[RMDB]
RNA sequence: GGGAACGACUCGAGUAGAGUCGAAAAGAUAUGGAUCAAUCCCAGUGGAGACCGAGUAUCGGAAACGAUACGAGGUCGAUGAAACUGGGAGUUGAUCCUAAGUCAAACCACUUGUUCGCAAGUGGAACACGAUAUUAUUGUUCGCAAUAAUAUCGUGAAAAGAAACAACAACAACAAC
Reactivity to DMS in 0.01 (KOAc 150mM, MgCl2 10mM, bicine 150mM(pH8.5), 24C), signal-to-noise 9, nucleotides 027 to 126: g010a040u000a300u010g000g000a010u000c000a040a080u000c000c000c000a010g010u000g010g000a040g000a010c000c000g000a300g010u000a000u000c010g020g000a100a100a190c010g010a010u010a000c000g000a300g000g000u000c000g000a050u010g000a120a160a020c000u000g000g000g000a010g010u010u000g000a010u000c000c000u000a010a080g010u000c030a140a170a240c000c000a010c010u000u000g000u000u010c270g020c010a010a010g010u000g000g010a080a180
Reactivity to 2A3 in 0.01 (KOAc 150mM, MgCl2 10mM, bicine 150mM(pH8.5), 24C), signal-to-noise 7, nucleotides 027 to 126: g020a020u080a030u180g010g000a000u000c010a020a050u000c010c000c000a000g020u020g030g040a050g000a010c010c010g000a020g000u010a000u010c010g010g030a130a040a040c020g000a000u010a010c000g010a020g000g010u000c000g000a020u000g000a000a030a000c000u000g000g000g010a020g030u010u020g010a000u000c000c000u000a060a010g030u010c060a090a060a150c010c000a010c010u020u030g050u130u140c300g010c190a010a000g000u010g020g020a020a030